RNA sequence: GGGAACGACUCGAGUAGAGUCGAAAAGCUAUGUUCCGUAACAGAGGUAAGAAAGGCUACGAGGUAACGAAUGGCCCAGGAAAAUGGACUAAGGCAUUUAACAUUCCACGGGCUAUCGAUGGCGCUACGCCACUAGAAUUUUCGAAUUCUAGUGGCGAAAAGAAACAACAACAACAAC
Reactivity to DMS in 0.01 (KOAc 150mM, MgCl2 10mM, bicine 150mM(pH8.5), 24C), signal-to-noise 5, nucleotides 027 to 126: g000c070u000a070u010g010u000u000c040c050g010u010a080a100c110a090g010a060g010g020u010a080a080g000a070a090a070g010g010c090u010a070c110g030a120g010g010u010a060a130c050g010a070a070u000g000g000c000c000c020a110g000g010a040a030a070a080u000g000g020a110c150u010a070a120g000g030c100a040u000u000u000a030a130c100a120u000u010c020c020a120c150g010g010g010c010u000a040u000c050g010a100u010g000g000c050g010c110u010a080
Reactivity to 2A3 in 0.01 (KOAc 150mM, MgCl2 10mM, bicine 150mM(pH8.5), 24C), signal-to-noise 3, nucleotides 027 to 126: g040c050u050a030u230g040u060u040c030c020g040u030a040a010c030a040g050a050g140g040u110a150a000g020a120a060a010g040g000c010u020a040c060g030a030g040g070u080a110a010c020g020a090a050u060g010g000c000c020c000a000g000g090a040a030a030a030u100g030g030a050c080u120a100a100g140g050c050a040u040u050u070a060a010c020a030u040u060c000c040a080c110g000g000g020c000u010a020u040c020g040a040u040g010g010c030g000c010u050a040